[RMDB]
RNA sequence: GGGAACGACUCGAGUAGAGUCGAAAACACGGAGCUGACCCGUCUGGAGAUCACCCAGCGGGUGCGGCUCAAGCUGCAGAAGCGGGAGGUCAUCCUCCCGGAAAGCAUUGAGAUCAGUAUUGCGUUCGAGGAUGACGCGGUCGUGCUGCACUGCUCCGUGUUAUCCUGAAUUCGUUCAGGAUAACACAAAAGAAACAACAACAACAAC
Reactivity to DMS in 0.01 (KOAc 150mM, MgCl2 10mM, bicine 150mM(pH8.5), 24C), signal-to-noise 1, nucleotides 027 to 156: c050a140c070g010g000a030g020c010u000g000a080c010c000c010g030u010c020u080g000g010a200g000a250u010c170a300c040c010c010a010g020c000g020g010g010u000g010c000g020g040c010u000c030a040a040g000c040u000g010c070a090g010a150a150g010c030g010g010g010a080g010g010u000c120a170u000c040c000u000c000c020c030g000g000a020a040a150g000c010a090u000u000g040a250g010a160u000c080a090g000u000a110u000u000g020c040g020u000u010c020g020a120g030g010a160u000g020a020c020g020c050g000g070u020c040g000u000g000c000u000g030c050a130c080u010g010c020u000c020c140
Reactivity to 2A3 in 0.01 (KOAc 150mM, MgCl2 10mM, bicine 150mM(pH8.5), 24C), signal-to-noise 4, nucleotides 027 to 156: c070a020c070g090g000a000g000c010u010g030a060c020c020c030g120u140c020u020g020g040a120g040a180u160c070a120c040c000c000a000g000c000g000g020g000u020g030c040g000g000c000u000c000a000a000g010c020u040g000c010a010g010a180a000g090c010g000g000g000a060g030g000u160c040a100u110c050c000u010c030c000c010g010g060a040a040a000g030c020a030u050u140g050a090g030a100u140c040a010g070u150a090u120u100g040c020g040u060u110c050g070a070g090g040a130u090g000a020c010g030c040g180g060u050c050g020u030g050c010u010g010c050a020c040u090g020c020u000c040c030
An RNA of 207 nucleotides, treated with DMS and 2A3 and read out base by base. The 2A3 profile rests on 2,120 reads. Values cover nucleotides 27 to 156. It was measured as part of the RMDB library OK3TST. The RNA was probed in 150 mM KOAc, 10 mM MgCl2 and 150 mM bicine (pH 8.5) at 24 C.